Chemical mapping of a 177-nucleotide RNA with DMS and 2A3. DMS adducts were read by reverse transcription with MarathonRT. The reactions ran in a buffer of 150 mM KOAc, 10 mM MgCl2 and 150 mM bicine (pH 8.5), at 24 C. For 2A3, 2,187 sequencing reads were counted.
[RMDB]
RNA sequence: GGGAACGACUCGAGUAGAGUCGAAAAGAUCUGCGCCGAUCCGAAACGCUAGCAAACAGCCCGCAUCAUGUCGUCUCCUAACUUCGACGUGGUGAAAUACUGAGCUUAUGCGAGUAAGCCUGUUAGCCAGGAUUUUAGACUUCGGUCUAAAAUCCUGAAAAGAAACAACAACAACAAC
Reactivity to DMS in 0.01 (KOAc 150mM, MgCl2 10mM, bicine 150mM(pH8.5), 24C), signal-to-noise 2, nucleotides 027 to 126: g000a110u030c030u020g020c050g010c050c020g020a090u010c000c030g020a050a070a080c100g040c020u010a050g000c070a010a020a070c080a150g000c020c060c030g000c010a020u000c010a030u000g010u000c020g010u000c070u020c160c090u020a070a070c260u010u000c010g000a030c020g000u010g000g010u000g020a030a050a110u010a110c040u020g010a150g000c010u010u000a050u000g000c230g000a170g000u000a030a050g000c000c050u000g000u000u000a070g010c100
Reactivity to 2A3 in 0.01 (KOAc 150mM, MgCl2 10mM, bicine 150mM(pH8.5), 24C), signal-to-noise 3, nucleotides 027 to 126: g010a070u040c030u100g020c010g000c050c030g020a030u030c020c010g040a070a060a000c020g000c070u040a040g040c030a030a040a120c030a060g030c010c000c000g000c000a020u010c000a000u050g020u000c000g040u000c040u080c070c070u140a180a140c040u080u020c020g000a000c000g000u000g000g000u020g010a020a080a000u170a020c040u050g010a000g030c000u010u030a000u070g060c040g010a040g040u010a010a010g030c030c040u070g030u100u050a020g040c040